The record gives the reactivity of an RNA of 177 nucleotides to DMS. DMS adducts were read by reverse transcription with MarathonRT. Reactivities are given for positions 27 through 126. Source: RMDB library M2PK50, as collected in RNAgym. The reactions ran in a buffer of 150 mM KOAc, 10 mM MgCl2 and 150 mM bicine (pH 8.5), at 24 C.
[RMDB]
RNA sequence: GGGAACGACUCGAGUAGAGUCGAAAAGAUAAUGUCUUCGGACAUUAUCCACGCCUAAAGGCUUUAAUUAAUUAGCUAAGCCUGCUAAUUAAAAUGGGAUUAACAACUGUCCAUUCGUGGACAGUAAUCCCUUAAAAGCCUUCGGGCUUUUAAGGGAAAAAGAAACAACAACAACAAC
Reactivity to DMS in 0.01 (KOAc 150mM, MgCl2 10mM, bicine 150mM(pH8.5), 24C), signal-to-noise 1, nucleotides 027 to 126: g010a010u000a000a000u010g000u000c000u000u040c270g020g020a050c000a010u000u010a010u000c010c100a060c170g000c000c000u010a040a030a040g000g020c010u000u000u000a040a190u020u000a010a000u000u000a010g000c010u010a150a060g030c250c150u020g030c000u000a000a010u000u000a000a010a190a100u000g000g000g000a030u000u000a040a150c150a130a170c010u000g010u000c000c000a030u000u010c100g030u000g000g000a010c000a010g000u000a010a010